Annotation
This 177-nucleotide RNA was probed chemically with DMS. The reactions ran in a buffer of 150 mM KOAc, 10 mM MgCl2 and 150 mM bicine (pH 8.5), at 24 C.
RNA sequence: GGGAACGACUCGAGUAGAGUCGAAAAUAGUAAAGGUAGUUAACUAACGGCACUAAUUGUUCUUGGGCAGUGGCCAAGUGGAACUUCAGAGACCUGGCAUUGCCAGCCAGAAAUCACUUGUCAUGGGCGACCAAUUGCAUUUCGAUGCAAUUGGUCGAAAAGAAACAACAACAACAAC
Reactivity to DMS in 0.01 (KOAc 150mM, MgCl2 10mM, bicine 150mM(pH8.5), 24C), signal-to-noise 1, nucleotides 027 to 126: u000a050g000u000a060a290a230g030g000u000a070g000u000u000a040a150c040u010a040a100c070g010g000c290a090c020u010a040a090u010u000g030u000u000c050u000u000g000g000g000c000a140g020u000g000g030c110c050a050a000g000u000g020g030a020a110c180u000u000c120a090g010a210g000a030c300c000u000g000g020c030a260u000u000g000c050c060a070g030c080c050a070g000a020a050a020u000c050a020c050u000u000g000u000c050a080u000g000g000g020
About this RNA
The DMS profile rests on 565 reads.